[RMDB]
RNA sequence: GGGAACGACUCGAGUAGAGUCGAAAAAAGUACCGGCCUCAAAGGUAUAGGGUAAAAGGAAACAACGUACAUCUGUAGCACAAGGUGUCUCCUGAUUAUUUAAAAAUUAGCUACAUUCAGCUGGGCGCGGUGGCUCACGCAUGUAAUCCCAGCACUCGGUGUCACGUAUUUUCGAAUACGUGACACCAAAAGAAACAACAACAACAAC
Reactivity to 2A3 in 0.01 (KOAc 150mM, MgCl2 10mM, bicine 150mM(pH8.5), 24C), signal-to-noise 2, nucleotides 027 to 156: a000a030g050u040a020c030c000g030g000c000c000u090c060a090a020a000g040g060u050a070u220a080g020g000g020u130a160a090a010a030g200g040a150a040a060c140a080a020c050g100u110a020c050a050u000c040u090g010u050a040g090c020a080c040a130a030g040g060u040g020u030c010u070c070c020u010g020a050u030u270a160u170u130u190a050a120a070a040a040u130u140a020g010c020u030a020c030a150u020u140c060a000g030c020u030g000g000g000c050g010c010g050g030u030g010g000c010u050c030a020c020g000c000a010u120g060u210a110a060u080c000c000c000a000g010c000a020c090u120c090

This 207-nucleotide RNA was probed chemically with 2A3. The data come from the RNA Mapping Database (RMDB), library OK3TST. Conditions: 150 mM KOAc, 10 mM MgCl2 and 150 mM bicine (pH 8.5), 24 C.